Conditions: 150 mM KOAc, 10 mM MgCl2 and 150 mM bicine (pH 8.5), 24 C. Chemical mapping of a 177-nucleotide RNA with DMS and 2A3. The DMS profile rests on 1,314 reads.
[RMDB]
RNA sequence: GGGAACGACUCGAGUAGAGUCGAAAAGAAAUCCAUGCGUGUCAACUGACUCUGUCCGUCUCAGCUGUGGCGUUGCUCUGGGCGGCGUUCUGCUGGCCGAGAUUUUCGUGACAGCUGAGACCCAGAGCUUCACUCCCUAGUUCGCUAGGGAGUGAAGAAAAGAAACAACAACAACAAC
Reactivity to DMS in 0.01 (KOAc 150mM, MgCl2 10mM, bicine 150mM(pH8.5), 24C), signal-to-noise 1, nucleotides 027 to 126: g000a070a120a080u010c020c010a080u000g000c090g040u010g020u020c100a120a060c140u010g020a300c020u000c010u000g000u010c150c290g020u000c010u000c010a020g020c030u000g030u000g000g030c020g000u010u000g000c020u000c010u010g050g020g010c000g010g000c040g030u020u020c120u010g000c020u000g010g010c000c010g020a000g000a060u000u000u000u000c020g030u000g000a000c010a010g010c020u000g010a020g000a000c000c020c010a000g000a020g000
Reactivity to 2A3 in 0.01 (KOAc 150mM, MgCl2 10mM, bicine 150mM(pH8.5), 24C), signal-to-noise 1, nucleotides 027 to 126: g030a000a130a000u070c000c040a050u150g050c120g090u190g130u160c040a050a030c130u090g090a080c000u050c010u030g060u080c100c020g030u000c000u010c030a030g040c000u020g000u020g090g030c020g000u020u010g020c000u000c100u210g070g000g060c030g040g010c000g040u280u120c160u300g020c000u020g210g000c000c020g010a020g000a030u150u120u000u020c010g000u060g230a010c000a020g000c000u000g000a000g000a020c020c000c000a000g000a000g000